[RMDB]
This 177-nucleotide RNA was probed chemically with 2A3 and DMS. Conditions: 150 mM KOAc, 10 mM MgCl2 and 150 mM bicine (pH 8.5), 24 C. In probing experiments dimethyl sulfate is read out at A N1 and C N3, which are open when not base-paired. The data come from the RNA Mapping Database (RMDB), library OK2TRN. For DMS, 8,850 sequencing reads were counted. DMS adducts were read by reverse transcription with MarathonRT.

RNA sequence: GGGAACGACUCGAGUAGAGUCGAAAACGCAGAUCGCGCAGGUGACUUCCAGGUCGGGCAGCUCGCUGUAAGUCUUGCCGAGAUACAGCCAGCGCUUGCACAGACUGCGGCCGUCCGACGUGAAGAACACUUAAAGAACGUUCGCGUUCUUUAAGUGAAAAGAAACAACAACAACAAC
Reactivity to 2A3 in 0.01 (KOAc 150mM, MgCl2 10mM, bicine 150mM(pH8.5), 24C), signal-to-noise 5, nucleotides 027 to 126: c050g000c010a040g040a240u120c050g010c010g000c070a020g030g090u090g060a070c020u060u020c040c030a050g070g110u020c000g000g020g050c010a010g000c070u140c120g010c020u040g080u170a120a070g040u030c010u010u060g070c040c030g070a050g010a040u150a080c040a030g050c010c010a030g010c050g000c070u030u060g000c030a060c020a030g090a030c030u040g000c000g020g000c000c020g030u010c000c010g030a050c030g160u110g040a020a040g040a060a020
Reactivity to DMS in 0.01 (KOAc 150mM, MgCl2 10mM, bicine 150mM(pH8.5), 24C), signal-to-noise 6, nucleotides 027 to 126: c050g010c060a070g010a090u000c090g020c050g030c060a050g010g020u010g010a130c030u010u000c070c100a130g010g010u000c030g010g000g000c010a060g000c010u010c150g030c020u000g000u000a070a070g010u010c020u000u000g010c090c090g020a090g000a130u010a070c120a090g010c050c060a050g010c110g020c020u000u000g010c060a030c180a080g010a060c070u010g010c010g010g010c020c050g000u000c010c000g010a020c030g000u000g000a070a070g010a150a180